About this RNA
This 177-nucleotide RNA was probed chemically with DMS. The data come from the RNA Mapping Database (RMDB), library OK2TRN.
[RMDB]
RNA sequence: GGGAACGACUCGAGUAGAGUCGAAAACGCCUCGGCCUCCCAAACUGCUGGGAUUACAGGCGUGAGACAUUGAGCCUGGACCCCCCAAAAAUGUUUAAGUUAGCAGAGCGAGGUGGUGGGUGCAUGAUGUUCUACCGUAAUUCGUUACGGUAGAACAAAAAGAAACAACAACAACAAC
Reactivity to DMS in 0.01 (KOAc 150mM, MgCl2 10mM, bicine 150mM(pH8.5), 24C), signal-to-noise 3, nucleotides 027 to 126: c080g010c010c010u000c070g020g010c050c100u010c000c010c000a070a110a140c060u000g000c030u010g000g010g010a080u010u000a150c080a020g010g030c000g020u000g010a120g000a160c230a110u010u000g010a140g010c010c000u010g010g000a180c120c060c000c000c020c080a020a030a050a080a090u000g010u020u000u000a040a130g010u010u000a060g000c030a020g020a100g010c080g020a070g000g050u000g010g020u010g020g000g010u000g030c060a060u000g000a180